[RMDB]
RNA sequence: GGGAACGACUCGAGUAGAGUCGAAAAUUUGUCUGAGAGGGAUGGUGCUGGGGGAAGGCUUUGGAUUGCAUCUCAAAUUAAGCUUUGCUCCUUAAAUGUGGCGCUCUCGCCAAGAAAAAGCUUGGGGGUUACUUACCAGGUUCGCCUGGUAAGUAACAAAAGAAACAACAACAACAAC
Reactivity to 2A3 in 0.01 (KOAc 150mM, MgCl2 10mM, bicine 150mM(pH8.5), 24C), signal-to-noise 1, nucleotides 027 to 126: u030u030u110g030u000c000u060g010a000g030a010g070g030g010a020u080g050g050u080g020c020u040g000g010g000g010g000a010a020g000g000c000u020u030u050g050g010a040u000u100g000c030a120u030c040u010c110a060a100a080u120u080a040a010g000c000u040u000u050g050c020u040c000c000u110u050a130a180a090u250g020u040g050g000c010g000c030u040c030u030c050g000c020c010a040a020g050a040a140a020a000a000g050c010u020u030g000g010g000g000
Reactivity to DMS in 0.01 (KOAc 150mM, MgCl2 10mM, bicine 150mM(pH8.5), 24C), signal-to-noise 3, nucleotides 027 to 126: u010u000u000g010u000c040u000g040a120g000a110g010g010g000a060u000g020g020u000g020c080u000g030g000g010g000g000a070a100g020g010c030u000u000u000g000g040a100u010u000g000c090a300u000c040u000c090a030a060a080u000u000a030a040g000c020u000u000u000g030c070u000c030c030u000u000a060a050a090u010g010u010g000g000c020g000c150u000c220u010c030g020c060c030a030a080g000a090a090a060a080a090g010c000u010u000g000g000g020g010
Record summary
This 177-nucleotide RNA was probed chemically with 2A3 and DMS. The 2A3 profile rests on 1,525 reads. For DMS, 2,121 sequencing reads were counted.